RNA sequence: GGGAACGACUCGAGUAGAGUCGAAAAAAGAGCUGUUUGGUCUAACAACAAUGUGACAAUCCUCUAUGAUGAACAGGUUGAAAAAACAGAUUAUCAUCAAGACUUGAUUGCAAUCAAAACCCUUCUCGACGAAGUCUUAGGCGCAGACCGCACCAGACCCCUCAAGCAUUUUCGAAUGCUUGAGGGGAAAAGAAACAACAACAACAAC
Reactivity to 2A3 in 0.01 (KOAc 150mM, MgCl2 10mM, bicine 150mM(pH8.5), 24C), signal-to-noise 1, nucleotides 027 to 156: a030a000g060a030g010c020u030g020u040u020u020g010g000u010c020u050a000a020c060a000a010c030a100a150u300g040u000g060a030c000a000a030u030c010c070u090c070u210a290u090g030a000u030g020a130a030c050a030g150g050u010u060g100a130a100a000a000a020a000c010a020g170a060u110u040a030u110c010a010u020c030a010a010g010a030c080u130u170g010a010u070u020g000c000a040a050u060c000a100a130a020a120c030c060c000u080u000c080u060c070g180a140c060g010a040a010g080u000c030u050u000a010g040g000c050g040c090a000g030a040c010c010g000c010a010c020c030a010g090a040